[RMDB]
RNA sequence: GGGAACGACUCGAGUAGAGUCGAAAAGCCAUAUCGGCCUGCGUGUUUAAGAAAAAGUGCGAGGAGGCGGACAGUUUUUAUCGCCAGCAACUGAGGCUCCAGAAGAUCGAGGGCGCGGAUCCGCUGGCAUCCGUACCCUUUUCGAAGGGUACGGAUGAAAAGAAACAACAACAACAAC
Reactivity to DMS in 0.01 (KOAc 150mM, MgCl2 10mM, bicine 150mM(pH8.5), 24C), signal-to-noise 3, nucleotides 027 to 126: g000c010c020a120u010a080u010c060g010g020c010c020u020g000c080g010u010g000u000u000u010a090a120g000a110a080a100a130a080g030u010g010c050g000a080g000g010a080g010g020c060g000g020a100c110a100g010u000u000u020u010u000a070u010c110g030c010c000a030g000c030a060a080c050u000g010a100g000g000c030u010c020c020a150g020a060a110g000a080u010c120g000a140g000g000g010c020g000c030g010g000a060u000c080c130g010c040u010g010g000
Reactivity to 2A3 in 0.01 (KOAc 150mM, MgCl2 10mM, bicine 150mM(pH8.5), 24C), signal-to-noise 1, nucleotides 027 to 126: g060c000c010a050u040a070u160c110g040g030c000c010u040g000c000g010u120g010u050u120u140a230a130g080a030a150a020a000a010g040u090g010c030g000a040g070g040a000g000g100c030g040g000a030c020a040g000u050u040u040u070u160a190u150c040g010c020c020a000g020c010a000a050c000u020g050a020g110g000c020u010c000c030a120g020a250a090g030a150u170c070g030a120g020g020g000c060g000c000g070g000a040u020c010c050g050c040u020g000g070
An RNA of 177 nucleotides, treated with DMS and 2A3 and read out base by base. Conditions: 150 mM KOAc, 10 mM MgCl2 and 150 mM bicine (pH 8.5), 24 C. For 2A3, 1,124 sequencing reads were counted. The data come from the RNA Mapping Database (RMDB), library OK2TST.